[RMDB]
This 177-nucleotide RNA was probed chemically with DMS.
Source: RMDB library OK2TST, as collected in RNAgym.
The reactions ran in a buffer of 150 mM KOAc, 10 mM MgCl2 and 150 mM bicine (pH 8.5), at 24 C.

RNA sequence: GGGAACGACUCGAGUAGAGUCGAAAAGCAAGGUUAAGCACUUAAGGUGCGGAGCCGAAGGGAAAAAUAGGGCGACUAGUUGCAUGCCGUAGACCCGAAACCGGGUGACCUAUCCAUGGACAGGUUGCAAACACGGGAGUUUCGACUCCCGUGUUUGAAAAGAAACAACAACAACAAC
Reactivity to DMS in 0.01 (KOAc 150mM, MgCl2 10mM, bicine 150mM(pH8.5), 24C), signal-to-noise 2, nucleotides 027 to 126: g010c100a110a120g020g000u000u000a100a300g000c000a000c000u000u010a140a150g030g010u000g010c010g000g030a140g000c020c000g020a220a120g060g000g000a020a030a050a100a080u020a050g010g000g030c020g020a040c050u000a040g010u000u000g020c050a140u000g000c040c080g020u010a090g000a100c040c020c030g000a030a120a140c220c030g000g000g010u000g000a050c050c020u000a050u010c060c030a070u000g000g000a050c100a140g010g000u000u000g010

For DMS, 1,048 sequencing reads were counted. For DMS the reverse transcriptase was MarathonRT.